Source: RMDB library OK2TST, as collected in RNAgym. Structure probing data (DMS) for a 177-nucleotide construct. The DMS profile rests on 998 reads. Reactivities are given for positions 27 through 126.
RNA sequence: GGGAACGACUCGAGUAGAGUCGAAAACAGUUGCAAUACCCAUGCCUAGGGCUACAUAAAUCCAUUUUGACUGAAGGAAAUAAGGUCGUUUAGAGACAGGGGUUUUUCGAGGAGGCUGAGCUAGAUCUGACGAGAUGGAUUUCGAUCCAUCUCGUCAAAAAGAAACAACAACAACAAC
Reactivity to DMS in 0.01 (KOAc 150mM, MgCl2 10mM, bicine 150mM(pH8.5), 24C), signal-to-noise 1, nucleotides 027 to 126: c160a080g000u020u010g000c090a100a110u010a120c040c000c010a070u000g000c000c040u000a170g000g000g010c030u010a010c140a070u000a040a100a130u000c080c030a080u000u000u010u010g050a090c120u010g010a120a080g000g000a020a050a070u010a050a200g030g030u000c030g000u000u000u000a110g000a130g000a030c030a080g000g010g030g000u010u000u000u000u010c040g000a090g010g000a090g000g010c020u000g000a060g030c080u000a060g010a080u010c040